Chemical mapping of a 177-nucleotide RNA with 2A3 and DMS. The 2A3 profile rests on 4,079 reads. Reactivities are rounded to 0.1 and cut off at 0 and 3.

RNA sequence: GGGAACGACUCGAGUAGAGUCGAAAAACGCUGUGCAGGUGGAGAGAGGCUGACGCUGUGCAGGUGGAGAGGCUGCUGCUCCCAGCCGCUGUGCAGGUGGAGAGAGGCUGACACUGUGCAGGUGGAGUAGCGUUAUCGUAUUCGUACGAUAACGCUAAAAAGAAACAACAACAACAAC
Reactivity to 2A3 in 0.01 (KOAc 150mM, MgCl2 10mM, bicine 150mM(pH8.5), 24C), signal-to-noise 3, nucleotides 027 to 126: a000c030g000c040u050g020u030g050c020a030g170g180u080g100g040a070g010a010g000a030g060g010c030u050g000a040c020g000c110u050g030u060g010c030a020g010g140u130g030g120a200g010a000g070g020c030u060g030c030u070g030c000u050c030c010c000a020g020c030c040g070c090u040g070u130g020c040a020g020g130u130g090g030a090g000a020g000a020g040g000c060u030g000a000c000a000c030u070g010u040g020c020a010g000g100u080g030g050a080g060
Reactivity to DMS in 0.01 (KOAc 150mM, MgCl2 10mM, bicine 150mM(pH8.5), 24C), signal-to-noise 4, nucleotides 027 to 126: a090c080g020c040u000g020u000g000c040a050g020g000u000g010g010a090g010a100g010a100g000g010c040u000g000a130c070g020c000u000g010u010g000c040a040g000g020u000g000g000a100g020a130g000g000c010u000g000c070u020g010c050u000c030c030c030a090g010c030c040g010c060u010g010u000g010c010a030g020g010u020g010g010a090g000a100g010a140g000g020c020u010g000a160c040a040c030u000g010u000g000c030a060g000g000u010g000g000a110g010